[RMDB]
RNA sequence: GGGAACGACUCGAGUAGAGUCGAAAACUUGUCUUGGGCUUGAGAGCGAUACGCGCUCCCUUGUGCUCAUUAUUAUUCGCGUAAGGCACGACCCUGUAACAAGCCGGCUCGAGACGAAUCUGGUCGCUCUGUGUCUUGGUUUCGACCAGGACGCGGGAAAAGAAACAACAACAACAAC
Reactivity to 2A3 in 0.01 (KOAc 150mM, MgCl2 10mM, bicine 150mM(pH8.5), 24C), signal-to-noise 9, nucleotides 027 to 126: c000u020u050g000u000c030u030u030g010g000g000c020u060u100g080a040g000a020g080c020g060a070u110a200c150g020c000g000c070u010c010c000c000u030u080g030u040g020c020u010c130a030u020u120a070u060u050a080u040u150c070g000c020g040u040a030a050g040g010c040a020c060g080a120c000c000c030u030g020u040a040a020c020a030a000g010c010c000g000g000c000u000c000g020a020g000a010c010g010a010a070u030c030u040g040g000u030c020g000c020
Reactivity to DMS in 0.01 (KOAc 150mM, MgCl2 10mM, bicine 150mM(pH8.5), 24C), signal-to-noise 9, nucleotides 027 to 126: c050u010u020g010u000c040u010u010g000g000g000c090u010u010g010a080g010a040g010c010g000a220u040a090c260g010c010g010c020u000c010c040c040u010u010g010u020g010c020u000c100a120u020u010a040u010u030a080u020u010c100g010c070g000u010a070a080g000g000c100a080c050g000a080c030c120c020u000g000u010a080a050c100a070a020g010c050c030g000g000c010u000c010g000a090g000a030c020g010a060a070u010c080u010g000g010u000c030g010c070
About this RNA:
The record gives the reactivity of an RNA of 177 nucleotides to 2A3 and DMS. Source: RMDB library OK1LIB, as collected in RNAgym. Values cover nucleotides 27 to 126. The 2A3 profile rests on 102,538 reads.